[RMDB]
RNA sequence: GGGAACGACUCGAGUAGAGUCGAAAAAAUAAUUGGCGAAACUCGUUUCGCGUUGGCUGCCUAAUUCAAGGAAUUAGCGUGCCUUCAUGCUAAGGGUUUGAUAUCUGCUAAAACCCGGUGCGUUCAUAAGACUUUUGCUUGUUCGCAAGCAAAAGAAGAUGACAGCUUACUUCGGUAAGCUGUCAUCAAAAGAAACAACAACAACAAC
Reactivity to 2A3 in 0.01 (KOAc 150mM, MgCl2 10mM, bicine 150mM(pH8.5), 24C), signal-to-noise 1, nucleotides 027 to 156: a000a000u290a000a090u060u090g020g010c000g000a090a000a000c030u040c160g010u000u010u010c000g000c000g010u010u010g000g010c040u070g010c020c020u000a040a050u000u030c050a190a210g140g000a030a010u000u000a010g010c070g050u000g010c000c020u000u030c090a090u150g000c010u040a010a030g000g000g070u000u050u000g040a010u060a070u160c170u200g060c070u110a040a050a020a010c000c000c000g000g030u000g030c040g000u010u020c070a070u040a160a030g060a100c000u010u020u010u020g040c010u000u000g040u070u030c130g040c100a030a010g000c000a030a000a000a000g030a030a010